RNA sequence: GGGAACGACUCGAGUAGAGUCGAAAAACAGCUAGUACGCUAGCUGAACCUCUCAGGGAAGCUUUUUGCUCGCGUUAUGUUUCUCAUCCGAAUAUAAGACGAACAAAAGGUUUGUCUGAGGGCAGAAAUAUAUUGCCAUGUUCGCAUGGCAAUAUAUAAAAGAAACAACAACAACAAC
Reactivity to 2A3 in 0.01 (KOAc 150mM, MgCl2 10mM, bicine 150mM(pH8.5), 24C), signal-to-noise 9, nucleotides 027 to 126: a000c000a000g010c010u010a000g020u100a030c250g030c120u000a000g000c000u010g020a030a030c000c000u020c000u000c000a000g000g000g020a010a000g000c010u000u010u000u010u010g010c000u000c010g010c020g060u020u010a010u020g060u000u090u020c090u020c050a230u100c080c070g010a020a000u020a000u010a040a050g190a130c010g000a010a000c000a000a000a010a010g080g050u020u010u040g300u030c000u000g000a000g000g000g000c020a020g120a060a090
Reactivity to DMS in 0.01 (KOAc 150mM, MgCl2 10mM, bicine 150mM(pH8.5), 24C), signal-to-noise 7, nucleotides 027 to 126: a140c010a000g020c010u000a010g010u010a110c230g050c000u000a010g020c010u000g000a100a120c070c000u000c000u000c000a010g000g000g000a020a010g000c000u000u000u000u000u000g010c010u010c000g010c230g000u000u000a010u010g000u000u000u000c040u010c300a090u040c300c300g000a010a010u000a010u010a010a020g000a050c000g000a010a020c000a010a000a010a010g010g000u000u000u000g000u000c000u000g010a010g000g000g010c170a080g000a090a080

Background
Conditions: 150 mM KOAc, 10 mM MgCl2 and 150 mM bicine (pH 8.5), 24 C. This 177-nucleotide RNA was probed chemically with 2A3 and DMS.